[RMDB]
RNA sequence: GGGAACGACUCGAGUAGAGUCGAAAAAGUGAGUAUGGCUCGUUACGACGAGCCAUACUCAUAACGGUUUUCCUAAAUCGUCGUGAGACGGACCUUGGAAAACCUAGUAUUUAAAUAACUAGGUCAAAUUAGCCUAGAUCCUUCGGGAUCUAGGCAACAACGAAGUGCUGUUCGCAGCACUUCGUUGAAAAGAAACAACAACAACAAC
Reactivity to 2A3 in 0.01 (KOAc 150mM, MgCl2 10mM, bicine 150mM(pH8.5), 24C), signal-to-noise 2, nucleotides 027 to 156: a000g030u000g000a000g000u010a000u000g000g010c010u000c010g000u000u060a120c300g020a000c000g000a080g020c010c000a010u000a000c000u010c000a000u000a000a000c000g000g010u010u000u000u000c000c000u010a000a000a000u050c000g000u000c010g000u020g130a110g000a040c000g000g010a000c000c000u010u020g000g000a010a000a000a000c000c000u020a020g020u000a020u020u110u100a080a140a110u150a070a020c070u050a000g000g000u020c010a000a060a230u170u240a040g000c010c000u000a000g000a000u000c000c000u030u140c160g070g000g000a010u030c000u000a000g000g030c010a000a000
The record gives the reactivity of an RNA of 207 nucleotides to 2A3. The reactions ran in a buffer of 150 mM KOAc, 10 mM MgCl2 and 150 mM bicine (pH 8.5), at 24 C. Reactivities are rounded to 0.1 and cut off at 0 and 3. For 2A3 the reverse transcriptase was SuperScript II with manganese. The 2A3 profile rests on 1,102 reads. Source: RMDB library M2RFPK, as collected in RNAgym.